[RMDB]
RNA sequence: GGGAACGACUCGAGUAGAGUCGAAAACAGGCCUAAUUCGUUAGGCCUGAAAAAGCGUACUACUUCUCACACGAUUCAACAGCGACUCCCAAAUAGGAGUCGACAUGAAUCUGUGGGAGGAAGUAUCGCAAAAAAGGUGGCAAUUCGUUGCCACCAAUAAACCAUACGCUUUCGAGCGUAUGGUUUAAAAAGAAACAACAACAACAAC
Reactivity to 2A3 in 0.01 (KOAc 150mM, MgCl2 10mM, bicine 150mM(pH8.5), 24C), signal-to-noise 2, nucleotides 027 to 156: c000a000g000g010c000c000u020a030a010u110u090c130g040u100u000a010g010g010c000c000u000g000a000a010a000a010a000g000c000g000u010a000c000u010a000c000u000u010c010u000c000a010c000a000c170g010a020u000u010c010a060a050c040a200g040c020g000a000c000u060c000c040c030a200a200a030u300a120g000g000a010g000u000c000g010a030c010a050u090g000a010a000u010c010u000g000u000g000g020g000a010g000g030a000a000g010u000a030u300c120g000c030a040a040a000a010a000a080g010g000u000g000g000c010a010a090u060u060c300g030u080u020g000c000c000a000c000c000a000a000
Reactivity to DMS in 0.01 (KOAc 150mM, MgCl2 10mM, bicine 150mM(pH8.5), 24C), signal-to-noise 2, nucleotides 027 to 156: c000a040g010g020c000c010u000a000a040u000u000c300g000u010u000a000g010g010c000c020u000g000a010a050a050a090a200g000c020g010u010a030c010u000a120c010u000u000c000u000c010a010c010a020c140g050a020u010u000c010a030a110c050a210g030c010g010a070c000u000c000c040c000a080a100a280u000a070g000g030a040g000u000c010g030a010c050a300u010g000a010a010u000c020u000g030u020g020g010g010a050g030g000a080a040g060u000a000u000c060g060c000a000a010a050a080a110a060g000g000u000g000g040c000a020a100u000u010c210g020u000u000g000c000c000a040c000c000a000a030

An RNA of 207 nucleotides, treated with 2A3 and DMS and read out base by base.
Reactivities are given for positions 27 through 156.